RNA sequence: GGGAACGACUCGAGUAGAGUCGAAAAGUAGGAUUCAUACAAAUCCUGUGUUGAAGUUUGGACAUCUCCAGCUUCCGCAAAGAGCCUUUUUGAAAUUUGUGGCUCGAAAGGGCGAAACCGAAGAUAAACCAUUCUCUAGGUUCGCCUAGAGAAUGGUAAAAGAAACAACAACAACAAC
Reactivity to DMS in 0.01 (KOAc 150mM, MgCl2 10mM, bicine 150mM(pH8.5), 24C), signal-to-noise 3, nucleotides 027 to 126: g030u000a020g020g000a030u010u020c090a180u000a150c270a130a030a030u000c000c010u010g010u000g020u000u000g010a040a050g020u000u020u020g000g000a110c190a140u000c190u020c000c000a020g010c010u000u000c010c050g020c030a020a050a130g000a190g010c000c010u010u000u000u030u000g000a050a110a140u000u000u000g060u010g030g020c060u000c010g000a020a040a080g000g000g020c010g020a060a080a090c030c020g010a080a070g000a080u010a090a180
Reactivity to 2A3 in 0.01 (KOAc 150mM, MgCl2 10mM, bicine 150mM(pH8.5), 24C), signal-to-noise 3, nucleotides 027 to 126: g010u020a010g040g010a040u040u070c090a050u170a300c040a050a080a010u020c000c010u020g000u010g000u050u030g000a010a010g020u150u300u170g010g010a060c100a280u100c090u040c200c000a000g010c000u000u000c000c000g000c010a100a090a010g050a040g010c000c030u050u080u020u070u130g110a120a130a040u210u160u140g050u050g020g000c010u010c000g020a020a000a000g000g000g020c000g040a070a000a010c020c030g030a040a030g070a100u210a110a140
Structure probing data (DMS and 2A3) for a 177-nucleotide construct. For 2A3, 1,898 sequencing reads were counted. Conditions: 150 mM KOAc, 10 mM MgCl2 and 150 mM bicine (pH 8.5), 24 C.